[RMDB]
RNA sequence: GGGAACGACUCGAGUAGAGUCGAAAAAAACUUUUGUGACUUGCUGAAACGGGACUAAUCUCCUCACCGAGGGUAAGCAAGUAAAAUACGCCUCUCAUAUCCUUACCUGAGGGUGGUAAGGAAAUAACCUGCAACGCUUCCUUCGGGAAGCGUUGAAUCAGACCUAUCGAUUCGUCGAUAGGUCUGAAAAAGAAACAACAACAACAAC
Reactivity to 2A3 in 0.01 (KOAc 150mM, MgCl2 10mM, bicine 150mM(pH8.5), 24C), signal-to-noise 1, nucleotides 027 to 156: a040a000a000c150u090u020u030u200g090u020g060a010c000u000u000g000c010u040g020a040a030a030c030g000g010g040a040c020u090a090a290u060c030u080c120c030u100c080a090c010c030g000a010g000g080g000u000a010a000g000c020a000a020g000u030a040a040a000a000u080a010c040g030c000c000u050c000u010c020a040u070a200u120c010c000u000u000a000c010c010u090g050a120g000g010g050u000g010g000u000a000a010g000g040a000a000a060u030a010a010c050c050u070g000c040a000a000c020g000c000u000u010c000c000u020u050c140g120g000g000a010a010g030c000g000u000u000g000a000a020